[RMDB]
RNA sequence: GGGAACGACUCGAGUAGAGUCGAAAAGAUAUGGAUGUCUGACAUGCUGUGUGUCGGAAACGACACGUCAGCAACAGCAGGACAUCCUAAGUCAAAACCAACGUGACGCUUCGGCGUCACGUUGGAAGACCAACAAGUAGUUCGCUACUUGUUGGUCAAAAGAAACAACAACAACAAC
Reactivity to 2A3 in 0.01 (KOAc 150mM, MgCl2 10mM, bicine 150mM(pH8.5), 24C), signal-to-noise 3, nucleotides 027 to 126: g010a010u040a030u080g000g000a000u000g010u030c010u020g040a130c040a200u200g000c010u000g010u000g000u000g000u030c020g010g000a030a050a030c000g000a000c000a000c010g140u210c020a010g000c010a030a040c050a030g090c060a030g080g070a020c000a000u000c000c010u000a070a010g010u020c020a000a010a070a160c000c000a000a000c010g020u000g000a000c020g020c000u080u130c300g180g000c020g010u000c000a010c020g010u010u000g000g000a000a010
Reactivity to DMS in 0.01 (KOAc 150mM, MgCl2 10mM, bicine 150mM(pH8.5), 24C), signal-to-noise 3, nucleotides 027 to 126: g000a040u000a300u010g000g010a020u000g020u000c000u010g000a250c170a190u000g010c000u020g020u010g010u000g000u010c000g000g000a070a060a110c000g000a030c020a000c000g010u010c000a000g010c010a060a050c220a120g010c070a230g010g000a020c010a030u000c000c010u000a010a060g010u000c020a110a050a130a140c010c010a000a010c010g030u000g010a020c020g000c000u000u010c230g030g000c000g010u000c000a000c000g000u000u010g000g000a010a060

An RNA of 177 nucleotides, treated with 2A3 and DMS and read out base by base. Reactivities are given for positions 27 through 126. For DMS, 3,430 sequencing reads were counted.